Annotation
The record gives the reactivity of an RNA of 177 nucleotides to DMS and 2A3. Values cover nucleotides 27 to 126. The RNA was probed in 150 mM KOAc, 10 mM MgCl2 and 150 mM bicine (pH 8.5) at 24 C.
RNA sequence: GGGAACGACUCGAGUAGAGUCGAAAAGAUAUGGAGCUAAUGCGACAUGAUCUCUCGGAAACGAGGUGAUCAACAGCGCAGGCUCCUAAGUCAAACUCUGUACGACAGUUCGCUGUCGUACAGAGAACUUCUUUUUUCUCUUCGGAGAAAAAAGAAGAAAAGAAACAACAACAACAAC
Reactivity to DMS in 0.01 (KOAc 150mM, MgCl2 10mM, bicine 150mM(pH8.5), 24C), signal-to-noise 1, nucleotides 027 to 126: g000a090u000a300u020g000g020a010g010c010u000a070a150u000g000c010g000a090c060a200u000g000a010u000c000u010c000u000c000g030g020a160a070a160c010g000a000g000g010u000g000a000u010c000a010a070c170a240g000c010g020c000a010g000g020c010u000c000c010u000a010a040g010u000c030a110a130a150c010u000c000u000g010u000a000c000g010a010c000a010g000u010u010c210g020c000u010g010u010c010g010u010a010c000a010g000a000g020a030a050
Reactivity to 2A3 in 0.01 (KOAc 150mM, MgCl2 10mM, bicine 150mM(pH8.5), 24C), signal-to-noise 1, nucleotides 027 to 126: g000a020u050a060u090g000g000a010g050c000u110a300a130u060g000c000g090a110c150a150u070g010a010u000c000u000c000u000c000g040g040a060a050a070c010g000a000g120g150u220g010a000u000c000a040a100c110a080g050c020g000c000a000g030g000c010u010c000c000u030a050a000g020u020c010a000a030a080c000u030c000u000g000u000a000c000g000a010c020a010g010u070u110c220g040c170u000g000u000c000g000u010a000c000a000g000a010g010a000a000